[RMDB]
RNA sequence: GGGAACGACUCGAGUAGAGUCGAAAAGAUAUGGAUGACCGGGAGCUGCAUGUCGGAAACGACAUAUAGCAUCGAUCGGUAUCCUAAGUCAAACUGUACGUUUAUACUUCGGUAUAAACGUACAGAACCUCAUAAGCGUGUUCGCACGCUUAUGAGGAAAAGAAACAACAACAACAAC
Reactivity to DMS in 0.01 (KOAc 150mM, MgCl2 10mM, bicine 150mM(pH8.5), 24C), signal-to-noise 2, nucleotides 027 to 126: g010a010u000a190u000g000g010a010u010g000a030c020c010g000g000g000a150g030c070u010g010c110a000u000g000u070c000g010g010a040a080a140c000g010a000c000a000u000a060u000a080g050c000a170u010c050g010a180u030c010g010g020u000a000u000c000c000u000a040a080g020u000c030a090a100a200c010u000g010u000a000c000g000u000u000u000a000u000a010c010u010u000c140g070g000u000a000u000a000a010a010c000g000u000a000c000a000g010a040a130
Reactivity to 2A3 in 0.01 (KOAc 150mM, MgCl2 10mM, bicine 150mM(pH8.5), 24C), signal-to-noise 2, nucleotides 027 to 126: g020a010u050a020u150g010g010a030u040g300a100c010c010g010g000g020a020g020c010u010g000c020a010u000g000u000c000g060g000a060a070a030c000g020a020c030a000u080a000u020a060g000c020a110u180c030g050a060u060c020g010g010u010a010u030c010c010u020a080a030g050u040c040a070a030a130c010u030g000u000a000c000g000u000u000u000a010u000a010c030u030u080c280g040g060u000a000u010a000a000a000c000g000u000a000c000a000g000a010a000

Conditions: 150 mM KOAc, 10 mM MgCl2 and 150 mM bicine (pH 8.5), 24 C. Chemical mapping of a 177-nucleotide RNA with DMS and 2A3. The DMS profile rests on 1,789 reads. It was measured as part of the RMDB library TTRDEL. Reactivities are rounded to 0.1 and cut off at 0 and 3. Reactivities are given for positions 27 through 126. The 2A3 profile rests on 3,940 reads.